[RMDB]
RNA sequence: GGGAACGACUCGAGUAGAGUCGAAAAACGGGACGUUAUGGUUGUCUUGCUACCUUUCGGUUAACUCGUGUGACUGGAGUCAAGUAUGUUGCUAGAACUAUAAAAUUGCGUCCAGAAGAUAGGUAUGUCUACCUAAUGACUUCGGUCAUUAGGUAGAAAAAGAAACAACAACAACAAC
Reactivity to DMS in 0.01 (KOAc 150mM, MgCl2 10mM, bicine 150mM(pH8.5), 24C), signal-to-noise 6, nucleotides 027 to 126: a120c100g010g000g010a030c030g020u000u010a050u020g000g000u000u000g010u010c010u000u010g000c070u020a050c070c040u010u010u010c040g010g010u010u010a040a040c030u040c180g000u050g010u020g000a030c020u010g000g010a050g000u020c070a060a060g010u020a070u020g010u000u010g000c030u000a060g000a040a030c030u010a060u010a050a040a090a090u020u020g000c030g010u010c000c010a090g000a100a080g000a070u030a040g000g010u020a040u040g020
Reactivity to 2A3 in 0.01 (KOAc 150mM, MgCl2 10mM, bicine 150mM(pH8.5), 24C), signal-to-noise 6, nucleotides 027 to 126: a000c070g030g000g020a030c060g010u070u050a030u070g040g040u030u130g100u110c010u000u010g010c000u050a020c010c000u020u040u050c020g040g000u060u020a080a030c040u080c190g120u220g010u050g300a020c020u040g080g020a020g060u130c030a030a110g040u050a130u270g030u060u030g010c010u050a000g040a060a030c050u040a030u100a120a110a120a130u160u180g020c010g000u000c000c000a020g060a060a000g060a060u230a090g080g070u130a110u130g080